[RMDB]
RNA sequence: GGGAACGACUCGAGUAGAGUCGAAAAGAUUGGAGAGGAGAGGAGACAGGGAUGAGGCAGAGCAUGGGAUGGGGCUAUCAACAGAUGUAGAUUAUUCCUUGCACAAGAGAUGAUGAUGAGCUGUGAAGUCAUUAUAUCUAUUCGUAGAUAUAAUGACAAAAGAAACAACAACAACAAC
Reactivity to DMS in 0.01 (KOAc 150mM, MgCl2 10mM, bicine 150mM(pH8.5), 24C), signal-to-noise 8, nucleotides 027 to 126: g000a130u010u020g000g000a110g010a090g000g000a120g010a100g000g010a080g010a070c100a080g000g000g000a060u010g000a090g010g000c080a060g000a090g010c090a080u020g000g000g000a080u010g010g010g010g020c060u010a050u010c060a060a070c130a060g000a070u010g010u010a060g000a060u010u010a080u000u000c000c010u000u010g000c070a050c110a040a060g010a080g020a050u010g000a050u010g010a070u010g010a060g000c040u010g010u010g010a070a090
Reactivity to 2A3 in 0.01 (KOAc 150mM, MgCl2 10mM, bicine 150mM(pH8.5), 24C), signal-to-noise 9, nucleotides 027 to 126: g080a040u110u170g030g020a060g020a040g060g020a050g010a030g060g020a030g020a040c050a050g030g030g020a050u070g020a060g040g000c050a020g010a020g070c050a050u090g010g000g030a030u050g020g010g030g000c010u030a050u120c040a030a090c010a040g070a080u100g050u100a030g010a060u060u040a030u100u070c000c000u030u070g030c060a050c020a100a020g020a010g000a080u090g010a020u040g010a030u050g020a020g020c030u020g040u030g110a080a020